This 177-nucleotide RNA was probed chemically with DMS. The data come from the RNA Mapping Database (RMDB), library TTRDEL. Conditions: 150 mM KOAc, 10 mM MgCl2 and 150 mM bicine (pH 8.5), 24 C. Reactivities are given for positions 27 through 126.

RNA sequence: GGGAACGACUCGAGUAGAGUCGAAAAGAUAUGGACCUCGUAGAGCCUUGGACCUCGGAAACGAGCUAGGCUCUACGGAGGUCCUAAGUCAAACAUGGCAUCUCAAGUUCGCUUGAGAUGCCAUGAAUCGAUGGUUGAUGUUCGCAUCAACCAUCGAAAAAGAAACAACAACAACAAC
Reactivity to DMS in 0.01 (KOAc 150mM, MgCl2 10mM, bicine 150mM(pH8.5), 24C), signal-to-noise 1, nucleotides 027 to 126: g000a030u000a300u000g010g010a000c000c000u030c020g000u010a000g000a020g020c000c000u000u000g010g000a180c280c000u000c000g000g000a070a130a160c030g000a010g000c020u000a000g000g000c000u000c010u000a000c010g010g030a010g000g010u000c000c000u010a000a060g010u000c020a130a120a270c000a000u000g010g000c000a010u000c000u000c000a010a000g030u000u030c150g030c000u000u020g000a000g000a020u000g000c000c040a000u000g010a020a090